[RMDB]
RNA sequence: GGGAACGACUCGAGUAGAGUCGAAAAGUCUGGUCGUGCAAACCAUUGGGCAACGCGUACGCCUUGCGCGAAAACACUUUGGCUGGACACAACACCAAGCUGCCGAGCAUCUUGGGGUAAAGCAAAACCAUGUUAUACAAUUCGUUGUAUAACAUGGAAAAGAAACAACAACAACAAC
Reactivity to 2A3 in 0.01 (KOAc 150mM, MgCl2 10mM, bicine 150mM(pH8.5), 24C), signal-to-noise 9, nucleotides 027 to 126: g030u010c030u030g020g010u030c030g030u040g080c060a070a090a100c030c030a090u060u140g050g040g000c030a070a030c030g010c020g080u090a050c140g080c030c040u050u070g000c070g000c010g040a070a020a030a010c060a020c020u100u080u100g020g000c010u020g030g010a010c010a000c020a130a050c020a020c010c000a000a010g000c010u030g000c050c160g150a070g020c000a010u020c010u010u020g010g000g000g020u080a110a070a030g060c070a060a040a020a030
Reactivity to DMS in 0.01 (KOAc 150mM, MgCl2 10mM, bicine 150mM(pH8.5), 24C), signal-to-noise 9, nucleotides 027 to 126: g020u000c030u000g010g020u000c060g010u000g010c070a130a100a110c050c040a080u000u000g010g010g010c030a080a210c080g000c020g020u000a070c240g020c110c090u000u000g010c010g000c010g000a040a070a100a100c070a020c030u000u000u010g010g010c020u000g010g010a130c030a060c120a110a040c050a060c020c010a000a030g010c080u000g010c020c160g010a150g010c020a030u000c010u000u000g000g000g000g010u000a060a090a120g000c140a060a060a110a170